[RMDB]
RNA sequence: GGGAACGACUCGAGUAGAGUCGAAAAAGUGAAGGCAAACUAAGGGUGCAUUAUAAAAUGUAUGGUAUUCCGCAUAUUGGCUUUGCGAAGUCGAUAUGGACAGGACAUAGUUAAAUUGCAAAUAACUUAGGAGGUAAACCUUCGGGUUUACCUCCUAAAAAGAAACAACAACAACAAC
Reactivity to 2A3 in 0.01 (KOAc 150mM, MgCl2 10mM, bicine 150mM(pH8.5), 24C), signal-to-noise 1, nucleotides 027 to 126: a000g100u140g000a000a110g000g000c040a000a000a000c080u100a080a070g300g050g000u000g000c000a010u050u070a050u160a300a010a000a000u000g040u000a000u050g300g000u030a030u000u000c000c000g000c000a000u000a110u070u000g010g000c000u000u050u110g070c140g100a000a000g000u000c000g050a000u000a000u000g000g000a100c050a050g050g020a000c000a010u000a000g000u000u000a130a200a000u010u000g070c040a000a050a140u010a000a000c000u000
Structure probing data (2A3) for a 177-nucleotide construct. The RNA was probed in 150 mM KOAc, 10 mM MgCl2 and 150 mM bicine (pH 8.5) at 24 C. 2A3 adducts were read by reverse transcription with SuperScript II with manganese.